[RMDB]
RNA sequence: GGGAACGACUCGAGUAGAGUCGAAAAAAGGACUGGUUCGCCAGUCCUUAUUCAUUCGUACGCAACGAAGCGUAAGUCAUUACGCAAAUCACUAAAAGCGUAUACGAAAGGACUUCGGUCCUUUCAAACCAUAUCGUCUAUUCGUAGACGAUAUGGUAAAAGAAACAACAACAACAAC
Reactivity to DMS in 0.01 (KOAc 150mM, MgCl2 10mM, bicine 150mM(pH8.5), 24C), signal-to-noise 9, nucleotides 027 to 126: a020a000g000g010a010c000u000g000g010u000u010c230g020c010c000a000g000u000c000c000u000u000a000u000u010c060a150u010u010c130g010u000a000c010g010c010a110a090c110g000a070a090g000c000g020u000a000a010g010u020c300a090u000u000a000c010g020c000a080a080a090u000c090a100c170u000a060a050a070a130g010c000g000u000a020u010a090c200g000a000a010a010g000g010a020c000u000u010c160g020g010u000c000c000u000u000u000c000a080a100
Reactivity to 2A3 in 0.01 (KOAc 150mM, MgCl2 10mM, bicine 150mM(pH8.5), 24C), signal-to-noise 7, nucleotides 027 to 126: a010a000g010g000a010c010u010g010g030u030u060c120g030c040c000a000g010u000c000c000u000u000a000u000u010c000a000u000u020c020g010u010a000c010g000c040a100a030c100g060a070a040g000c000g000u010a020a010g160u140c110a230u050u020a000c010g000c000a030a070a120u130c070a060c120u190a070a060a040a030g000c000g010u020a020u020a040c080g010a000a000a010g000g000a000c000u030u070c260g080g000u010c000c000u000u000u000c000a000a000
Conditions: 150 mM KOAc, 10 mM MgCl2 and 150 mM bicine (pH 8.5), 24 C. Chemical mapping of a 177-nucleotide RNA with DMS and 2A3. It was measured as part of the RMDB library M2PK50. For DMS, 14,532 sequencing reads were counted. For DMS the reverse transcriptase was MarathonRT. The 2A3 profile rests on 22,954 reads.